[RMDB]
RNA sequence: GGGAACGACUCGAGUAGAGUCGAAAAGAACACGUCUCGGGACGACGCUAAACUCGCCCUGGUCGGGAUGGGUUUAACGACCCCUCGGGUUUCCUAGUUCCUAAAACUAGGUGGUGGAGUCAUAUAAGAUUAAAAUACAUUUCGAUGUAUUUUAAUCAAAAGAAACAACAACAACAAC
Reactivity to DMS in 0.01 (KOAc 150mM, MgCl2 10mM, bicine 150mM(pH8.5), 24C), signal-to-noise 8, nucleotides 027 to 126: g000a190a140c060a300c020g010u000c010u000c040g010g000g000a030c100g000a040c020g010c300u050a010a030a020c060u000c020g010c040c000c000u020g000g010u010c070g010g000g000a070u030g010g000g000u000u000u010a060a110c150g000a060c010c000c000c030u010c040g000g010g000u000u010u000c000c000u000a010g000u000u000c020c020u020a060a010a020a020c020u000a000g000g010u010g000g010u000g000g000a140g000u020c050a070u030a090u020a110a160
Reactivity to 2A3 in 0.01 (KOAc 150mM, MgCl2 10mM, bicine 150mM(pH8.5), 24C), signal-to-noise 8, nucleotides 027 to 126: g050a050a010c050a010c060g010u010c000u020c020g030g040g010a090c300g010a010c020g020c190u020a020a020a000c000u010c010g050c030c000c010u070g050g060u060c020g000g000g050a060u130g050g030g020u010u020u080a070a020c050g020a010c000c000c010c000u030c020g020g000g000u010u010u010c000c000u010a000g010u000u050c010c040u100a020a020a010a010c010u010a030g020g000u010g010g010u040g000g050a090g050u050c040a010u070a010u030a210a040